[RMDB]
Background: This 177-nucleotide RNA was probed chemically with DMS and 2A3. Conditions: 150 mM KOAc, 10 mM MgCl2 and 150 mM bicine (pH 8.5), 24 C. Source: RMDB libraries RFM100 and RFMREP, as collected in RNAgym.

RNA sequence: GGGAACGACUCGAGUAGAGUCGAAAAUCGUAGCCAGUGAGGUUUAUCCGAGGCGCGAUUAUUGCUAAUUGAAAACUUUUCCCAAUACCCCGCCGUGACGACUUGAAAUAUAGUCGGCAUUGGCAAUGACUUAGUACAAGUUCGCUUGUACUAAGUCAAAAGAAACAACAACAACAAC
Reactivity to DMS in 0.01 (KOAc 150mM, MgCl2 10mM, bicine 150mM(pH8.5), 24C), signal-to-noise 4, nucleotides 027 to 126: u000c020g010u000a080g040c000c000a100g010u010g020a190g000g020u030u040u030a130u030c000c000g030a240g010g020c000g010c010g000a000u010u000a070u030u010g000c080u010a080a120u010u050g020a090a040a060a140c090u020u010u000u000c020c000c010a100a050u060a180c060c070c050c060g020c030c000g010u000g010a030c010g030a020c010u010u000g010a130a190a120u020a080u010a010g010u000c000g000g000c000a000u000u030g040g020c000a080a050u020
Reactivity to 2A3 in 0.01 (KOAc 150mM, MgCl2 10mM, bicine 150mM(pH8.5), 24C), signal-to-noise 9, nucleotides 027 to 126: u010c010g000u070a110g000c000c000a080g060u160g220a160g070g080u150u220u210a110u120c010c010g020a060g000g000c000g000c000g000a000u010u020a090u050u130g080c050u080a160a150u100u170g140a070a060a050a080c040u070u040u020u020c000c000c000a010a020u110a120c020c020c010c040g000c000c000g000u000g000a010c000g000a000c000u000u000g030a000a020a000u200a040u160a030g000u000c000g000g000c000a000u110u300g000g000c000a000a050u040